[RMDB]
Structure probing data (2A3) for a 207-nucleotide construct. It was measured as part of the RMDB library OK3TST. 2A3 adducts were read by reverse transcription with SuperScript II with manganese. Reactivities are rounded to 0.1 and cut off at 0 and 3. The RNA was probed in 150 mM KOAc, 10 mM MgCl2 and 150 mM bicine (pH 8.5) at 24 C.
RNA sequence: GGGAACGACUCGAGUAGAGUCGAAAAUCACAUUGAGGACGUGCCUCAAUGGGCUCAGAGGGGGCCAAAGGGAGUCUUUAGCUCAAUGAUUUUCCAACCCUAAUUUGUGGAGUAUCUCAUGAGCUGGGUUCAUGUGUUCCACCUUCAACAUCAAACACCUCACUAAAUGGUUCGCCAUUUAGUGAGGAAAAGAAACAACAACAACAAC
Reactivity to 2A3 in 0.01 (KOAc 150mM, MgCl2 10mM, bicine 150mM(pH8.5), 24C), signal-to-noise 3, nucleotides 027 to 156: u070c000a010c000a040u000u000g000a010g000g030a030c100g080u200g110c000c000u000c010a000a020u010g000g010g010c010u030c050a070g060a050g090g020g020g010g000c020c020a090a030a010g160g030g010a020g020u020c020u120u180u220a020g070c000u020c030a040a120u030g000a010u050u020u070u080c030c020a060a070c020c000c020u060a120a200u160u110u220g050u090g000g010a020g040u040a060u050c020u000c030a030u030g010a020g010c030u070g100g000g000u030u030c030a020u080g060u030g050u170u010c010c020a100c060c030u100u110c040a100a100c010a100u150c040a010a080a050c070a040